Annotation: The data come from the RNA Mapping Database (RMDB), library RFM100. Structure probing data (2A3) for a 177-nucleotide construct. 2A3 adducts were read by reverse transcription with SuperScript II with manganese. Reactivities are given for positions 27 through 126.
RNA sequence: GGGAACGACUCGAGUAGAGUCGAAAAACGAUCGGCGUACGCGCCGAUCGACUUGGGCUCAGGUAUGUCUGCGGUGAGGCUGGUACAACUCGGCAGGUUUCACUGUAGAUCUACCUGCGCUCACGAACUCACCCUAGGGGUUCGCCCCUAGGGUGAGAAAAGAAACAACAACAACAAC
Reactivity to 2A3 in 0.01 (KOAc 150mM, MgCl2 10mM, bicine 150mM(pH8.5), 24C), signal-to-noise 2, nucleotides 027 to 126: a010c000g000a000u010c000g000g000c000g040u060a030c250g010c000g030c110c020g020a020u010c010g000a000c000u040u060g000g010g000c000u000c020a000g000g020u000a010u040g010u000c010u010g010c000g040g000u000g000a010g020g010c020u040g030g040u290a130c050a150a140c190u050c100g110g030c100a040g050g040u000u050u030c000a000c000u000g010u040a010g000a000u020c000u000a000c000c030u000g000c000g000c010u010c020a000c030g060a030a010